[RMDB]
RNA sequence: GGGAACGACUCGAGUAGAGUCGAAAAGUGGAGGUCAAAGUGAUCAAUUUGCCGAUGCCCAGCUCGGCGAUGCGUUCCUCGCUGGCGCCUUGAAACUCGGCGGGGUAUUCCAUGGCGCCCACGCCGACCUUCGUAUCCUUUUCGAAGGAUACGAAGGAAAAGAAACAACAACAACAAC
Reactivity to 2A3 in 0.01 (KOAc 150mM, MgCl2 10mM, bicine 150mM(pH8.5), 24C), signal-to-noise 2, nucleotides 027 to 126: g150u110g020g050a050g040g000u080c090a090a060a100g080u090g090a090u070c030a070a130u040u030u170g010c000c020g030a030u090g040c040c060c050a050g030c030u010c000g000g000c010g000a020u070g000c000g040u060u040c010c010u000c000g020c030u020g010g030c060g020c010c020u050u070g100a120a070a050c040u020c020g020g000c030g000g010g030g000u030a120u060u090c030c030a040u080g090g000c050g030c020c030c000a120c010g010c010c010g000a020
Reactivity to DMS in 0.01 (KOAc 150mM, MgCl2 10mM, bicine 150mM(pH8.5), 24C), signal-to-noise 4, nucleotides 027 to 126: g010u010g000g010a070g000g020u000c050a130a090a060g000u010g020a080u020c080a090a130u000u000u000g030c020c000g000a070u010g030c020c060c050a120g020c230u000c010g010g000c010g000a010u010g010c180g000u000u010c030c020u000c070g020c030u000g000g010c080g000c020c030u000u000g000a050a060a090c150u000c010g010g020c060g000g000g020g020u000a080u000u000c060c040a060u000g010g010c090g000c010c000c020a060c020g020c050c030g010a090

The record gives the reactivity of an RNA of 177 nucleotides to 2A3 and DMS. For 2A3 the reverse transcriptase was SuperScript II with manganese. The reactions ran in a buffer of 150 mM KOAc, 10 mM MgCl2 and 150 mM bicine (pH 8.5), at 24 C.